[RMDB]
RNA sequence: GGGAACGACUCGAGUAGAGUCGAAAAGAGACGUUGUUCGCAACGUCUCGCAAUAUGCGGCGCUCGCGCGCCGCACUGAGAUCGUCGCGAUCCAGACCGACAACACCCAAGAAUUCGUUCUUGGGAAACCACUAACAAUAUUCGUAUUGUUAGUGGUAAAAGAAACAACAACAACAAC
Reactivity to 2A3 in 0.01 (KOAc 150mM, MgCl2 10mM, bicine 150mM(pH8.5), 24C), signal-to-noise 3, nucleotides 027 to 126: g020a000g000a000c010g000u010u010g030u070u080c200g050c100a000a010c000g000u000c000u000c000g000c010a040a080u130a050u180g000c010g010g000c010g000c060u290c300g090c080g000c030g000c100c000g060c010a000c000u140g090a210g010a120u020c020g250u140c150g070c090g190a000u000c010c010a000g060a060c000c040g060a020c020a090a010c030a100c000c000c000a000a000g000a010a010u120u130c180g040u090u000c050u000u010g000g000g000a030a010
Reactivity to DMS in 0.01 (KOAc 150mM, MgCl2 10mM, bicine 150mM(pH8.5), 24C), signal-to-noise 2, nucleotides 027 to 126: g010a010g000a010c010g050u000u020g020u000u000c170g040c000a000a000c000g020u000c000u000c000g000c160a090a080u000a060u000g000c000g000g050c000g100c050u020c290g000c300g040c000g000c000c000g090c000a000c000u000g000a220g010a010u000c000g000u010c230g030c080g010a000u010c010c000a040g000a180c060c010g010a070c130a030a030c150a220c030c000c000a000a030g000a010a010u000u010c200g010u000u000c000u010u000g020g000g000a000a060
Chemical mapping of a 177-nucleotide RNA with 2A3 and DMS.
DMS adducts were read by reverse transcription with MarathonRT.
Conditions: 150 mM KOAc, 10 mM MgCl2 and 150 mM bicine (pH 8.5), 24 C.
Reactivities are given for positions 27 through 126.
The data come from the RNA Mapping Database (RMDB), library M2PK50.